[RMDB]
The record gives the reactivity of an RNA of 207 nucleotides to 2A3 and DMS. Source: RMDB library OK3TST, as collected in RNAgym. DMS adducts were read by reverse transcription with MarathonRT. For 2A3 the reverse transcriptase was SuperScript II with manganese.
RNA sequence: GGGAACGACUCGAGUAGAGUCGAAAAAUACGUUCACUUGGAAGAUUACAAAGGUGGGGGAAGACGGAAGCCCAAAGAUAACCUCCUCUUUUCAAGACUUAACAAUGAGAGUAAGUUUUGCUACUCAGAAAAAAAGAAGCAGUGUGUGCACACAAGCGUAUACGAAGUUUUUCGAAACUUCGUAUACAAAAGAAACAACAACAACAAC
Reactivity to 2A3 in 0.01 (KOAc 150mM, MgCl2 10mM, bicine 150mM(pH8.5), 24C), signal-to-noise 3, nucleotides 027 to 156: a000u090a030c020g020u000u040c060a020c020u040u060g040g030a060a020g050a110u150u160a150c120a140a100a030g090g010u080g010g000g000g000g010a040a040g020a010c010g000g040a020a030g040c010c000c010a010a070a040g070a020u110a110a090c000c000u020c020c000u010c010u040u090u020u020c040a040a060g010a040c020u060u030a070a020c050a120a210u180g050a080g000a020g140u020a160a070g000u030u030u170u090g000c010u040a140c040u030c090a000g210a070a120a000a000a000a010a000g090a050a010g050c060a050g000u010g010u000g000u070g060c090a030c000a000c010a110a050g070c040
Reactivity to DMS in 0.01 (KOAc 150mM, MgCl2 10mM, bicine 150mM(pH8.5), 24C), signal-to-noise 1, nucleotides 027 to 156: a110u010a040c030g000u000u010c030a100c170u010u030g010g000a040a180g000a180u020u000a190c110a020a060a040g030g060u010g000g010g070g030g030a100a040g000a080c060g000g010a040a110g050c030c010c030a040a060a070g000a090u000a050a080c010c020u000c020c010u020c010u010u000u000u010c040a050a060g000a060c010u010u000a080a060c070a050a140u000g000a190g020a070g040u000a020a140g010u020u020u000u010g020c070u010a040c040u010c010a180g010a000a000a030a020a020a080a090g000a080a090g010c030a030g000u010g000u000g010u000g020c080a060c050a120c030a080a090g000c070